About this RNA:
The record gives the reactivity of an RNA of 207 nucleotides to 2A3. Reactivities are rounded to 0.1 and cut off at 0 and 3. High 2A3 reactivity points to a flexible backbone, as in loops and unpaired stretches. The reactions ran in a buffer of 150 mM KOAc, 10 mM MgCl2 and 150 mM bicine (pH 8.5), at 24 C.

[RMDB]
RNA sequence: GGGAACGACUCGAGUAGAGUCGAAAACAGAGCUAAUGAGCCACAUACCUACCCAAGGUGAAAGCUCCUUCUCUCGCAAUAUGUAACUCAUGAUUCUCAUGACCCCUGGUUGGAGAGAUCCGGACUAUAGACUAGAGGGUGUUCGCACCCUCUAGAACCAGCCAAUUAAGUUCGCUUAAUUGGCUGGAAAAGAAACAACAACAACAAC
Reactivity to 2A3 in 0.01 (KOAc 150mM, MgCl2 10mM, bicine 150mM(pH8.5), 24C), signal-to-noise 1, nucleotides 027 to 156: c030a000g070a020g050c030u120a250a130u180g060a030g060c060c050a070c040a080u230a070c000c000u020a030c000c000c020a050a000g000g020u020g070a030a110a000g020c050u020c000c010u040u020c010u010c020u010c030g110c240a020a030u040a050u110g080u120a110a060c000u000c000a010u010g050a240u300u050c140u030c090a000u050g030a040c010c000c000c100u080g140g000u010u100g010g000a010g000a000g000a030u030c050c040g010g020a020c020u080a040u190a190g070a030c000u000a010g030a010g000g010g000u000g010u040u030c100g050c030a010c000c000c000u000c000u000a000g000a000a000